Chemical mapping of a 207-nucleotide RNA with 2A3. The RNA was probed in 150 mM KOAc, 10 mM MgCl2 and 150 mM bicine (pH 8.5) at 24 C. For 2A3 the reverse transcriptase was SuperScript II with manganese. The data come from the RNA Mapping Database (RMDB), library M2RFPK.
RNA sequence: GGGAACGACUCGAGUAGAGUCGAAAAGUCUCCUAGAGAGCUUGGCCGUCGGGCCUUACACCCCGACUUGCUGAGUUUCUCUAGGAGAGUCCCUUUCCCAGCCAGAGGUGGCUGGUCAAACACUACCAAAACUCUUGCUAGUUCGCUAGCAAGAGAAUCUAUCGACAUACUUCGGUAUGUCGAUAGAAAAAGAAACAACAACAACAAC
Reactivity to 2A3 in 0.01 (KOAc 150mM, MgCl2 10mM, bicine 150mM(pH8.5), 24C), signal-to-noise 1, nucleotides 027 to 156: g040u000c000u000c010c010u000a000g000a020g000a000g000c000u010u010g030g000c000c000g020u000c000g010g010g030c020c030u020u090a080c050a060c000c000c000c000g010a010c050u090u300g000c000u010g010a010g000u030u290u020c000u000c000u000a000g000g000a010g000a010g000u000c000c000c000u020u050u020c020c000c000a000g010c010c010a010g030a080g130g020u020g000g000c000u000g010g020u000c010a010a010a010c020a010c100u050a010c010c000a000a030a130a160c000u010c000u010u000g000c000u010a010g010u080u050c260g040c110u000a000g000c000a000a000g000a000g000a010a040